[RMDB]
RNA sequence: GGGAACGACUCGAGUAGAGUCGAAAAUGAGGCUCGGUUGCAAAUAGGUGACUAUGGGGGUCUGGUUAAUCUUGCUGGCGAGGUUAUUGGGCUGUCAGAGAAGUUGAGGAAGAUAGGUGAGAGGGUAACCUACGAACCUGUUCGCAGGUUCGUAGGUAAAAGAAACAACAACAACAAC
Reactivity to DMS in 0.01 (KOAc 150mM, MgCl2 10mM, bicine 150mM(pH8.5), 24C), signal-to-noise 1, nucleotides 027 to 126: u010g010a100g000g000c030u000c060g000g010u000u000g020c070a060a100a100u000a060g000g020u000g010a090c030u010a100u000g010g030g010g000g010u000c050u010g020g000u000u000a080a050u000c020u000u010g000c030u010g000g010c100g040a080g000g020u000u010a090u010u010g000g000g010c040u000g020u010c060a060g030a080g000a060a060g000u000u000g020a090g010g000a030a060g020a070u010a050g000g040u000g000a070g000a070g000g000g010u000a060
Chemical mapping of a 177-nucleotide RNA with DMS. It was measured as part of the RMDB library OK2TST.